[RMDB]
RNA sequence: GGGAACGACUCGAGUAGAGUCGAAAACGAGGGCGGUUAUUCGGAGGCCUACGUACCGUUUUGCGGGCAUGCGAUCGUCGAGGCACUGGCGGGCAUGCGCACCGACGUCGCCGAUCCGAUGCUCGAAAUUACCAUGCUCAUUCGUGAGCAUGGUAAUAAAAGAAACAACAACAACAAC
Reactivity to 2A3 in 0.01 (KOAc 150mM, MgCl2 10mM, bicine 150mM(pH8.5), 24C), signal-to-noise 6, nucleotides 027 to 126: c040g010a130g030g060g020c040g040g060u150u120a110u130u130c040g070g040a040g070g030c010c010u040a040c030g030u040a060c000c040g010u040u030u110u260g060c030g000g020g000c010a010u060g050c050g080a100u050c010g010u010c000g010a060g100g020c090a030c170u070g030g000c040g000g010g040c050a050u180g060c040g000c040a030c010c020g030a030c010g050u020c000g000c010c010g010a000u000c000c020g020a020u030g030c000u000c000g010a080a040
Reactivity to DMS in 0.01 (KOAc 150mM, MgCl2 10mM, bicine 150mM(pH8.5), 24C), signal-to-noise 7, nucleotides 027 to 126: c050g010a300g010g010g000c030g010g010u000u010a140u010u010c070g000g000a130g020g010c030c020u000a120c120g020u000a250c070c030g010u000u000u010u010g010c030g000g010g020c030a030u000g010c080g000a040u010c020g000u010c010g000a080g010g000c090a090c090u010g010g010c030g010g010g010c080a080u010g000c060g000c050a070c050c030g000a110c090g010u000c090g010c030c070g000a040u010c020c010g010a040u000g000c020u010c010g000a050a100